[RMDB]
RNA sequence: GGGAACGACUCGAGUAGAGUCGAAAACGAGUGCCAAGGUUCUUGGCAUCCAUCAAGAUUUUCACAUAAACGGAAGGCUUCAUUUGCCCUACUCUGCCCCGGCCCUGCUGGGCAGUCCAGCCAGGCAGGGAUUUCUUGAAGUUAGAGAUCCGAACUAUAAUAUAUCGUCCUUCGGGACGAUAUAUUAAAAAGAAACAACAACAACAAC
Reactivity to DMS in 0.01 (KOAc 150mM, MgCl2 10mM, bicine 150mM(pH8.5), 24C), signal-to-noise 1, nucleotides 027 to 156: c050g030a060g010u000g020c010c020a030a040g030g030u010u000c040u000u000g000g010c000a000u000c000c040a210u000c040a080a110g020a210u000u010u020u010c000a140c070a130u000a040a080a170c100g020g030a080a090g030g000c030u010u000c010a110u000u000u000g030c000c000c030u020a070c050u010c040u010g000c060c000c040c010g000g010c000c010c030u010g020c040u000g010g020g020c040a090g000u000c120c100a160g040c000c030a050g030g030c020a040g020g020g020a030u000u010u000c040u000u020g010a080a130g050u010u000a070g010a110g030a120u000c000c000g020a040a090c110u000a240
Source: RMDB library OK3TST, as collected in RNAgym. Chemical mapping of a 207-nucleotide RNA with DMS. The reactions ran in a buffer of 150 mM KOAc, 10 mM MgCl2 and 150 mM bicine (pH 8.5), at 24 C.